[RMDB]
RNA sequence: GGGAACGACUCGAGUAGAGUCGAAAAGCCAGGCCGUACGCGGCCUGGCAAGAACGCCAAAGUGACGCAAUCUUCCGCGUCAGGAAGGCGAAACGAGGUAAAACGAGUGGAGUACGCUCCACUCGAAGCGUUUUACUCCGUUCGCGGAGUAAAACGCAAAAGAAACAACAACAACAAC
Reactivity to 2A3 in 0.01 (KOAc 150mM, MgCl2 10mM, bicine 150mM(pH8.5), 24C), signal-to-noise 1, nucleotides 027 to 126: g000c060c000a000g000g020c120c000g000u000a000c300g060c000g160g000c000c000u000g000g140c000a000a000g030a050a040c000g000c000c030a200a270a000g040u010g000a000c000g000c010a000a220u050c050u290u040c100c010g070c000g000u000c000a000g010g010a060a130g020g000c000g010a000a000a000c040g010a030g000g080u290a010a010a010a010c060g000a000g000u000g000g000a000g010u020a060c300g000c130u010c000c000a000c000u000c000g000a000a000
Structure probing data (2A3) for a 177-nucleotide construct. The reactions ran in a buffer of 150 mM KOAc, 10 mM MgCl2 and 150 mM bicine (pH 8.5), at 24 C. Reactivities are given for positions 27 through 126. The 2A3 profile rests on 550 reads.